[RMDB]
Chemical mapping of a 177-nucleotide RNA with DMS and 2A3. The RNA was probed in 150 mM KOAc, 10 mM MgCl2 and 150 mM bicine (pH 8.5) at 24 C. The DMS profile rests on 3,020 reads. For DMS the reverse transcriptase was MarathonRT. The 2A3 profile rests on 1,896 reads.
RNA sequence: GGGAACGACUCGAGUAGAGUCGAAAAUUAUUGAUGUCAUCUUCAAAGAGGGUAAGUGCCUCCAUGUAGAUCUCUUCAUUGGUGAGCAUGGAGCUGUAGAGGGCUAUCGAGAGUUCUCCUGAGGCACAAUACGCAAACCAUUCGUGGUUUGCGUAUUAAAAGAAACAACAACAACAAC
Reactivity to DMS in 0.01 (KOAc 150mM, MgCl2 10mM, bicine 150mM(pH8.5), 24C), signal-to-noise 4, nucleotides 027 to 126: u010u000a120u010u010g010a040u000g010u000c050a060u000c030u000u000c060a060a090a140g000a080g010g000g000u000a060a120g010u000g010c100c000u000c000c090a040u000g000u000a080g010a100u000c050u020c030u000u000c300a110u000u010g010g000u000g000a200g000c020a040u000g010g010a050g020c040u000g000u000a080g010a090g000g010g020c030u010a060u010c090g000a030g000a300g000u010u000c050u000c020c090u010g010a060g010g010c050a050c110
Reactivity to 2A3 in 0.01 (KOAc 150mM, MgCl2 10mM, bicine 150mM(pH8.5), 24C), signal-to-noise 2, nucleotides 027 to 126: u110u070a060u040u100g020a040u060g080u060c040a090u000c040u100u040c060a050a150a030g090a070g080g050g040u080a100a100g050u010g090c010c000u000c020c010a030u040g010u020a090g050a220u050c040u000c010u220u080c060a200u110u300g000g030u050g030a010g000c000a010u030g000g050a010g030c020u010g000u040a060g010a060g050g000g000c030u080a050u140c090g020a020g000a000g010u000u020c010u010c000c010u070g020a060g060g000c050a000c010